[RMDB]
RNA sequence: GGGAACGACUCGAGUAGAGUCGAAAAAGAAAGGAUACCGAAAGGUAUCCUAUUUGCACAUUGGAUUGCGGUAACCUCUCACGUGUGACGUUGAAGUAACUAUGUGCAGUAAUACCGCAAGAAAAAACCUAACCUAAUCGUUCGCGAUUAGGUUAGGAAAAGAAACAACAACAACAAC
Reactivity to DMS in 0.01 (KOAc 150mM, MgCl2 10mM, bicine 150mM(pH8.5), 24C), signal-to-noise 1, nucleotides 027 to 126: a150g020a120a050a020g050g000a020u000a010c000c000g000a070a060a160g000g010u000a000u000c000c010u000a010u000u010u000g010c070a030c030a050u010u000g010g010a170u020u000g050c000g010g000u010a090a060c030c030u010c030u000c040a010c000g040u000g010u000g010a020c020g000u010u020g000a070a070g000u000a000a060c030u020a010u010g010u000g000c010a030g010u010a050a040u000a030c030c000g020c050a030a040g010a000a070a090a060a090a030
Reactivity to 2A3 in 0.01 (KOAc 150mM, MgCl2 10mM, bicine 150mM(pH8.5), 24C), signal-to-noise 2, nucleotides 027 to 126: a000g130a030a100a000g000g010a000u000a010c020c000g050a050a050a000g000g000u000a000u000c000c050u000a000u020u060u030g000c010a010c020a030u050u060g210g120a140u090u100g030c000g000g000u030a020a020c010c000u000c010u020c030a000c020g120u280g130u190g180a060c030g030u020u060g040a130a080g000u000a040a000c020u030a020u010g010u000g000c010a030g050u030a020a020u010a030c000c000g010c040a020a000g070a030a080a000a000a000a010

Structure probing data (DMS and 2A3) for a 177-nucleotide construct. 2A3 adducts were read by reverse transcription with SuperScript II with manganese. The reactions ran in a buffer of 150 mM KOAc, 10 mM MgCl2 and 150 mM bicine (pH 8.5), at 24 C. Reactivities are given for positions 27 through 126. The 2A3 profile rests on 1,707 reads. Source: RMDB library M2PK90, as collected in RNAgym.